[RMDB]
RNA sequence: GGGAACGACUCGAGUAGAGUCGAAAAAGAGAGAGGAGAAUCCCCAUGACGCUGGAAGAGACUUCCGGGUAACCAAGUCAAGGAGAAGGAACGGUAGAAAAGAGCGAGCCUCUCGAUACGAAAGGGCAAGGCUCCGUCUUCGGACGGAGCAAAAGAAACAACAACAACAAC
Reactivity to 2A3 in 0.01 (KOAc 150mM, MgCl2 10mM, bicine 150mM(pH8.5), 24C), signal-to-noise 2, nucleotides 027 to 129: a000g040a020g020a000g000a000g020g020a000g030a010a090u020c000c000c030c000a090u080g020a000c020g000c040u050g000g020a050a010g030a060g030a130c030u030u040c070c020g020g000g000u050a030a070c030c000a040a000g010u060c020a000a020g080g000a060g000a030a040g000g000a030a010c140g000g080u130a030g110a050a120a020a010g020a010g030c070g020a010g000c030c000u020c000u000c040g000a010u010a080c110g050a060a020a000g040g040g000c010a020a000g090
Reactivity to DMS in 0.01 (KOAc 150mM, MgCl2 10mM, bicine 150mM(pH8.5), 24C), signal-to-noise 6, nucleotides 027 to 129: a050g040a080g050a010g000a060g010g010a060g000a120a060u030c020c070c020c120a100u030g020a050c200g000c060u020g080g020a080a050g030a000g010a070c060u040u020c030c110g010g010g020u060a050a080c180c140a120a110g060u070c160a120a100g010g030a010g010a000a000g000g000a010a000c140g040g040u030a070g020a070a090a120a060g020a100g050c110g010a100g010c060c020u030c100u040c030g010a100u050a110c100g030a010a000a010g020g010g050c080a120a080g020